[RMDB]
RNA sequence: GGGAACGACUCGAGUAGAGUCGAAAAGAUAUGGAGACGGUCAUAUCUACCAAUGGACAGCGAUGAGUCGUUCAUCGGAAACGAUGACGACGAGCUGUCAUUGGUAGAUAUGACCGUCUCCUAAGUCGUUAUCCAAUAGGUUCGCCUAUUGGAUAACAAAAGAAACAACAACAACAAC
Reactivity to DMS in 0.01 (KOAc 150mM, MgCl2 10mM, bicine 150mM(pH8.5), 24C), signal-to-noise 2, nucleotides 027 to 126: g000a070u000a300u000g020g010a020g020a010c000g000g000u010c000a020u000a000u000c000u000a000c020c000a020a020u000g010g010a050c000a010g010c020g020a200u010g020a300g000u000c000g000u000u000c000a000u020c000g010g010a110a090a290c000g020a000u010g000a010c000g020a010c010g000a110g020c010u000g000u000c010a010u000u000g000g000u000a010g010a000u000a000u000g000a000c000c000g000u000c000u000c000c000u000a000a060g010u000c130